The record gives the reactivity of an RNA of 177 nucleotides to 2A3 and DMS. The reactions ran in a buffer of 150 mM KOAc, 10 mM MgCl2 and 150 mM bicine (pH 8.5), at 24 C. It was measured as part of the RMDB library OK1LIB. For DMS, 1,827 sequencing reads were counted. Reactivities are rounded to 0.1 and cut off at 0 and 3.

RNA sequence: GGGAACGACUCGAGUAGAGUCGAAAACAGUGCAAAUAGCUACACUUUUUAAUUCAAGCGAUCCGAAAUUUAUAAAGUUUUCUAGUACAGCCUUAAGACUUGUUAUGAUUUCGUUACCUGUACAAGGAUUACUCGUCAGGUUCGCCUGACGAGUAAUAAAAGAAACAACAACAACAAC
Reactivity to 2A3 in 0.01 (KOAc 150mM, MgCl2 10mM, bicine 150mM(pH8.5), 24C), signal-to-noise 2, nucleotides 027 to 126: c050a000g030u040g030c040a050a150a230u160a070g000c050u090a010c000a060c000u000u000u010u190u230a210a190u300u140c040a070a090g050c050g050a060u030c000c000g040a060a010a010u070u130u020a160u080a090a150a020g000u000u040u050u000c030u020a000g060u100a050c030a060g090c060c000u060u070a000a090g000a010c000u040u040g060u200u050a100u110g030a050u020u060u020c000g030u000u110a120c000c010u030g060u080a060c110a130a000g020g020
Reactivity to DMS in 0.01 (KOAc 150mM, MgCl2 10mM, bicine 150mM(pH8.5), 24C), signal-to-noise 2, nucleotides 027 to 126: c080a030g000u010g020c060a050a120a080u060a130g020c050u000a080c160a010c020u020u000u010u000u030a010a100u010u020c070a030a100g030c050g010a010u000c040c020g010a060a030a020u020u010u010a030u040a090a050a090g000u010u000u000u020c100u000a100g010u010a050c110a170g010c110c100u000u000a040a090g020a030c050u010u000g000u000u080a070u030g000a060u020u000u000c020g000u050u030a110c110c010u010g010u030a020c110a070a070g010g000